Chemical mapping of a 177-nucleotide RNA with 2A3 and DMS.
Conditions: 150 mM KOAc, 10 mM MgCl2 and 150 mM bicine (pH 8.5), 24 C.
The 2A3 profile rests on 1,613 reads.
Values cover nucleotides 27 to 126.
RNA sequence: GGGAACGACUCGAGUAGAGUCGAAAAGAUGUCCACGGCGGCGCCGGCCAGCAAUGCAUGGAGCUGUAUCGCGAGAUCGAUCGCGAGGCCGGCUCGCAGGGCGAUCUCGUCGAAGCGGCAGGCACGGUCAUCCGUAACGGUUCGCCGUUACGGAUGAAAAAGAAACAACAACAACAAC
Reactivity to 2A3 in 0.01 (KOAc 150mM, MgCl2 10mM, bicine 150mM(pH8.5), 24C), signal-to-noise 1, nucleotides 027 to 126: g100a020u080g020u070c030c010a000c190g080g000c000g000g030c060g010c020c000g030g000c050c010a010g040c070a060a100u220g060c050a080u150g080g040a120g020c050u070g070u140a070u040c000g000c020g000a000g000a110u150c090g040a020u040c020g010c010g020a040g030g000c100c030g000g080c000u000c000g000c010a060g000g000g040c010g040a030u010c020u010c040g070u080c050g000a070a010g000c020g020g000c010a030g020g040c040a030c100g060g000
Reactivity to DMS in 0.01 (KOAc 150mM, MgCl2 10mM, bicine 150mM(pH8.5), 24C), signal-to-noise 2, nucleotides 027 to 126: g000a160u000g010u010c010c010a190c130g010g020c000g000g000c210g000c000c000g010g000c000c010a080g010c060a130a090u000g050c130a130u000g040g010a170g000c040u020g000u010a100u000c000g000c010g000a010g000a120u000c110g000a090u000c000g000c010g010a030g020g000c110c050g000g010c010u000c000g010c020a080g010g000g010c020g000a050u000c030u010c050g010u010c040g010a050a190g000c030g000g020c050a070g000g020c020a060c060g010g010